The record gives the reactivity of an RNA of 177 nucleotides to DMS and 2A3. For 2A3, 606 sequencing reads were counted. Source: RMDB library OK1LIB, as collected in RNAgym. DMS adducts were read by reverse transcription with MarathonRT. The reactions ran in a buffer of 150 mM KOAc, 10 mM MgCl2 and 150 mM bicine (pH 8.5), at 24 C. For 2A3 the reverse transcriptase was SuperScript II with manganese.

[RMDB]
RNA sequence: GGGAACGACUCGAGUAGAGUCGAAAAUGGUGUUAAGUGGAAUAAGUGGAAAAAUAUACAUAUAUGUACAGGGGGCUACAUAUAUGUAUAUGCCCCCUAGGAUCAGUAUAAGUAGGUAUAAGGUGGAAUACUAGGGCAUGUUCGCAUGCCCUAGUAUAAAAGAAACAACAACAACAAC
Reactivity to DMS in 0.01 (KOAc 150mM, MgCl2 10mM, bicine 150mM(pH8.5), 24C), signal-to-noise 2, nucleotides 027 to 126: u010g020g030u020g000u000u010a040a100g000u020g000g000a090a060u000a090a110g010u010g000g000a010a070a060a070a070u000a030u010a010c000a030u020a030u010a010u000g000u000a050c070a100g000g010g000g000g020c120u000a020c040a020u000a050u020a040u030g020u000a020u000a020u000g000c060c000c010c000c010u000a030g000g010a050u000c070a050g010u020a100u030a020a090g000u010a010g000g000u010a050u030a030a070g020g020u000g000g000a100
Reactivity to 2A3 in 0.01 (KOAc 150mM, MgCl2 10mM, bicine 150mM(pH8.5), 24C), signal-to-noise 1, nucleotides 027 to 126: u100g000g010u040g010u060u070a140a090g040u050g060g120a010a030u110a170a000g060u170g000g000a000a010a000a040a080u000a000u000a020c000a000u030a000u050a000u050g010u020a010c050a040g080g010g000g080g000c030u000a000c000a000u020a010u010a010u040g000u000a000u000a000u010g000c000c000c000c000c000u000a000g000g000a030u090c010a010g020u060a020u040a070a060g070u080a000g040g090u090a100u010a130a030g090g040u090g100g000a010